[RMDB]
RNA sequence: GGGAACGACUCGAGUAGAGUCGAAAAGAAGCGGCGAAAAAUGCGUGUAAAUAAAAGGUCAAUAUGACCUGACAGUGAUACCAAAUUAAUUGGGUCGAAGUCUCGCCAAAAUACGCAACAAAUAGAACGGCUAUACCUUAUUCGUAAGGUAUAGCCGAAAAGAAACAACAACAACAAC
Reactivity to 2A3 in 0.01 (KOAc 150mM, MgCl2 10mM, bicine 150mM(pH8.5), 24C), signal-to-noise 2, nucleotides 027 to 126: g130a010a010g070c060g010g000c030g050a110a040a000a010a000u030g020c040g030u000g000u040a010a090a150u080a010a100a010a000g010g000u010c010a090a160u140a120u300g000a010c000c030u010g000a030c000a020g030u080g100a010u280a300c000c020a030a060a030u260u160a070a170u090u010g000g000g020u000c000g000a080a000g050u000c050u030c060g000c000c000a050a040a070a040u040a010c010g000c060a000a020c010a050a210a040u200a060g050a130a010
Reactivity to DMS in 0.01 (KOAc 150mM, MgCl2 10mM, bicine 150mM(pH8.5), 24C), signal-to-noise 1, nucleotides 027 to 126: g000a110a040g040c210g000g010c020g030a040a080a050a070a030u000g010c070g010u000g000u000a040a070a050u010a050a060a080a020g000g030u000c000a200a130u000a180u000g010a000c020c010u010g000a020c030a040g000u020g000a020u000a060c010c000a000a030a170u020u040a040a090u020u010g010g000g050u010c000g000a070a150g000u000c000u000c050g000c020c030a070a060a040a050u000a020c010g010c010a030a080c190a050a090a110u000a020g060a060a160